The data come from the RNA Mapping Database (RMDB), library M2PK50. The record gives the reactivity of an RNA of 177 nucleotides to 2A3 and DMS. The RNA was probed in 150 mM KOAc, 10 mM MgCl2 and 150 mM bicine (pH 8.5) at 24 C.

[RMDB]
RNA sequence: GGGAACGACUCGAGUAGAGUCGAAAAAGGAGUCCUUUCGAGGACUCCUACUAGUGCCGCCGACCACUUAAAAACAACGGCCAAACAAAAAUGUCAGCAAAAAACGCCUAGCUUUCGAGCUAGGCAAGAUAUUAUUAAUCUUCGGAUUAAUAAUAUCAAAAGAAACAACAACAACAAC
Reactivity to 2A3 in 0.01 (KOAc 150mM, MgCl2 10mM, bicine 150mM(pH8.5), 24C), signal-to-noise 1, nucleotides 027 to 126: a040g000g000a010g000u010c020c000u010u030u080c170g040a000g010g000a000c010u010c000c000u010a010c010u000a010g020u000g030c000c060g010c010c030g010a060c010c010a030c030u140u280a060a060a030a080a100c100a050a050c000g020g000c000c050a020a150a080c070a070a070a110a000a030u130g060u190c030a050g080c000a150a020a040a100a050a070c110g020c010c000u020a030g000c000u040u110u170c240g060a010g000c000u000a030g000g000c010a000a000
Reactivity to DMS in 0.01 (KOAc 150mM, MgCl2 10mM, bicine 150mM(pH8.5), 24C), signal-to-noise 2, nucleotides 027 to 126: a240g000g010a010g000u010c000c000u000u000u000c080g000a040g000g010a000c010u000c000c000u000a000c000u010a010g010u000g020c040c110g000c020c000g040a170c300c010a010c010u000u000a030a010a040a040a240c140a080a070c050g000g060c020c300a030a090a040c030a000a070a050a080a030u000g060u010c080a070g030c110a010a050a070a040a040a120c190g010c000c000u000a000g010c000u010u000u040c140g000a040g010c000u000a000g000g000c000a000a010